[RMDB]
Chemical mapping of a 177-nucleotide RNA with 2A3 and DMS. For DMS the reverse transcriptase was MarathonRT. For 2A3 the reverse transcriptase was SuperScript II with manganese.

RNA sequence: GGGAACGACUCGAGUAGAGUCGAAAAGUAUCAUAUCUAUACCAACCAUAUAACCCUUCAAUCUUACGUUUAGUUAAACAAGUUAUUGAAGCGUCACAUAAAGAAGGUAAAUGGACAGGUAUGUGUGCGUUUAUCGUCUGUUCGCAGACGAUAAACGAAAAGAAACAACAACAACAAC
Reactivity to 2A3 in 0.01 (KOAc 150mM, MgCl2 10mM, bicine 150mM(pH8.5), 24C), signal-to-noise 2, nucleotides 027 to 126: g020u030a030u130c000a000u010a000u040c020u060a060u000a110c000c000a030a010c020c030a020u080a000u020a130a050c050c010c060u000u000c010a020a060u030c020u060u050a010c040g000u030u020u090a220g140u120u300a090a040a050c070a180a070g060u090u070a090u080u120g050a000a020g010c000g000u000c020a010c000a080u140a060a110a060g080a060a030g050g000u010a030a140a000u030g050g010a030c060a100g000g000u020a000u010g060u000g000u040g030
Reactivity to DMS in 0.01 (KOAc 150mM, MgCl2 10mM, bicine 150mM(pH8.5), 24C), signal-to-noise 2, nucleotides 027 to 126: g000u000a090u000c000a000u000a030u000c040u010a140u030a140c000c010a120a240c020c030a150u000a050u000a120a190c240c060c000u000u000c000a080a060u000c050u000u000a050c130g030u010u000u000a180g030u020u030a120a060a130c140a020a050g000u020u010a050u000u010g010a020a050g000c090g000u000c100a030c210a050u000a030a040a030g040a120a100g010g000u000a050a060a000u000g000g010a200c170a030g010g000u000a000u000g030u000g010u000g000
The 2A3 profile rests on 1,389 reads.